The record gives the reactivity of an RNA of 177 nucleotides to DMS and 2A3.
2A3 adducts were read by reverse transcription with SuperScript II with manganese.
For DMS, 1,569 sequencing reads were counted.

[RMDB]
RNA sequence: GGGAACGACUCGAGUAGAGUCGAAAAGAGGAAGCAGCCAUUGUUAGAGAUGAAAUUAAAGCACUAAAAGCUGAGAGUGAGGUGCAACAUGAUGACGCAUAAUAUUCAUGAUAAUAUCAGCCAAUGGGUUGCCUGCAAAUUUCGAUUUGCAGGCAACAAAAGAAACAACAACAACAAC
Reactivity to DMS in 0.01 (KOAc 150mM, MgCl2 10mM, bicine 150mM(pH8.5), 24C), signal-to-noise 2, nucleotides 027 to 126: g080a130g000g030a010a030g000c020a070g000c010c040a010u010u000g010u020u010a110g020a100g030a050u000g000a260a040a070u010u000a100a180a110g000c010a110c010u060a160a140a030a110g050c040u000g020a110g040a060g010u000g090a130g000g000u040g000c020a080a220c020a070u000g000a050u000g000a040c150g000c180a080u000a020a030u020a110u000u000c060a040u000g000a080u000a100a020u000a100u000c040a080g000c110c000a030a130u010g000g000
Reactivity to 2A3 in 0.01 (KOAc 150mM, MgCl2 10mM, bicine 150mM(pH8.5), 24C), signal-to-noise 2, nucleotides 027 to 126: g090a020g050g040a010a000g070c000a000g000c010c010a020u000u000g070u050u140a050g010a020g020a090u120g160a080a050a040u270u170a040a050a000g040c000a060c060u030a030a110a040a020g010c010u010g070a060g040a090g150u080g030a010g000g040u040g000c000a020a040c000a020u040g000a030u030g010a040c060g020c110a080u000a160a030u050a180u100u020c050a070u060g060a030u030a120a060u140a060u070c040a000g010c000c030a020a000u050g100g000